[RMDB]
RNA sequence: GGGAACGACUCGAGUAGAGUCGAAAAGCCAGGAGCCAGGGGCCCAGAAGAUUGAGCUUCUAGAGCCUCAGAGAUGGAAUUCGCCGUUUUGCCGCGAUUUGGCGUUAACUUAUUGACCCAUGGGGAGGAGGGUCACUUCCCGUGAAAAGAAGGCAGAGUCAUAAUUACCAUUCGUGGUAAUUAUGACAAAAGAAACAACAACAACAAC
Reactivity to 2A3 in 0.01 (KOAc 150mM, MgCl2 10mM, bicine 150mM(pH8.5), 24C), signal-to-noise 5, nucleotides 027 to 156: g050c020c020a020g040g060a040g030c040c050a030g050g000g010g000c000c010c030a000g010a040a010g020a030u190u300g070a040g130c010u010u010c010u030a080g010a030g010c010c000u030c010a020g020a010g000a080u110g000g050a030a090u080u050c030g020c020c020g040u020u010u100u150g040c040c030g030c030g040a030u080u020u130g010g000c010g020u050u040a070a030c020u080u110a050u150u200g040a060c010c000c020a070u060g010g000g000g020a010g010g030a040g010g020g000u020c020a000c010u030u020c000c010c020g010u010g020a080a090a020a030g100a010a040g020g000c060a030g010a030
Reactivity to DMS in 0.01 (KOAc 150mM, MgCl2 10mM, bicine 150mM(pH8.5), 24C), signal-to-noise 2, nucleotides 027 to 156: g000c000c020a100g020g030a120g030c030c030a130g000g010g020g040c010c020c030a070g010a060a050g020a300u000u010g020a160g000c010u010u010c010u010a100g020a090g020c030c000u010c040a100g010a120g010a070u000g040g010a080a180u000u020c020g030c000c040g020u000u000u000u000g030c030c030g010c070g000a140u010u000u010g010g020c040g020u000u000a110a120c080u010u010a090u020u030g010a100c020c010c010a120u000g030g000g000g020a080g000g010a120g010g000g010u000c030a060c060u000u000c030c000c020g030u010g010a100a070a080a090g040a110a080g010g000c020a110g020a250